[RMDB]
RNA sequence: GGGAACGACUCGAGUAGAGUCGAAAACUAAUAGCCUUAAAAUAGCACCUUUACAAUCAGUUGCAUGCAAUGUAGUCAGAACAAGGUGACCACUUAAACUAGCCUGUAUAACACACUUGGCAACAUCAGCUUUAGCGGAAUUCGUUCCGCUAAAGCUAAAAGAAACAACAACAACAAC
Reactivity to 2A3 in 0.01 (KOAc 150mM, MgCl2 10mM, bicine 150mM(pH8.5), 24C), signal-to-noise 1, nucleotides 027 to 126: c040u050a000a100u060a110g040c010c020u140u110a010a170a100a160u070a120g030c000a000c010c000u100u100u130a130c100a100a110u110c020a070g020u070u090g070c020a000u060g060c040a140a100u010g020u060a040g050u090c040a000g020a070a080c060a140a000g000g030u020g030a070c020c020a020c050u100u090a110a020a000c010u000a050g020c030c030u020g050u050a040u030a130a000c060a000c000a010c060u070u030g050g000c010a040a040c010a040u130c150
Reactivity to DMS in 0.01 (KOAc 150mM, MgCl2 10mM, bicine 150mM(pH8.5), 24C), signal-to-noise 1, nucleotides 027 to 126: c080u000a110a030u020a100g030c000c000u030u000a030a000a090a090u030a070g000c010a090c090c000u000u000u000a100c200a100a080u000c120a120g020u010u000g000c050a070u010g000c140a000a120u000g000u000a080g000u000c090a140g000a080a070c130a100a090g000g010u000g000a120c100c020a080c080u030u030a110a020a050c090u000a050g000c010c000u010g000u000a080u000a050a050c100a130c080a030c080u030u000g000g000c030a020a020c120a080u020c120